Chemical mapping of a 177-nucleotide RNA with 2A3 and DMS. The reactions ran in a buffer of 150 mM KOAc, 10 mM MgCl2 and 150 mM bicine (pH 8.5), at 24 C. DMS adducts were read by reverse transcription with MarathonRT. For 2A3, 2,764 sequencing reads were counted. For DMS, 3,702 sequencing reads were counted. 2A3 adducts were read by reverse transcription with SuperScript II with manganese.
RNA sequence: GGGAACGACUCGAGUAGAGUCGAAAAAUAGAAACUAAGUGGAUCUUAGAUGAAUGUGCCAGCUCUACUAUAUUCCUGUCAAAUUCCAGAGUUCGUCAUCAUUAUUCAUUAGAAGGAAAACACCACAGCUAAGGAUAACUUUCGAGUUAUCCUUAGCAAAAGAAACAACAACAACAAC
Reactivity to 2A3 in 0.01 (KOAc 150mM, MgCl2 10mM, bicine 150mM(pH8.5), 24C), signal-to-noise 3, nucleotides 027 to 126: a000u130a020g100a030a150a020c040u030a150a000g040u060g100g050a060u080c020u040u050a090g010a070u040g030a070a040u050g010u040g120c030c000a010g000c020u020c000u030a060c030u020a050u050a040u260u070c000c010u030g090u130c030a080a050a120u110u020c030c030a030g000a010g070u050u020c000g030u010c020a010u020c010a030u010u130a060u090u030c030a040u020u090a070g090a120a030g060g040a050a050a040a020c080a020c070c030a030c020a010
Reactivity to DMS in 0.01 (KOAc 150mM, MgCl2 10mM, bicine 150mM(pH8.5), 24C), signal-to-noise 4, nucleotides 027 to 126: a090u000a090g010a120a100a120c030u000a040a070g020u000g010g010a080u000c020u010u000a090g010a100u010g010a070a060u000g010u000g010c060c040a070g000c020u010c020u000a080c060u020a070u000a100u000u000c020c010u000g000u010c110a050a080a170u010u010c060c040a070g010a060g010u010u000c110g020u010c030a030u000c040a030u010u000a060u000u010c010a050u000u000a060g000a070a040g020g000a050a040a040a080c130a110c030c030a070c200a100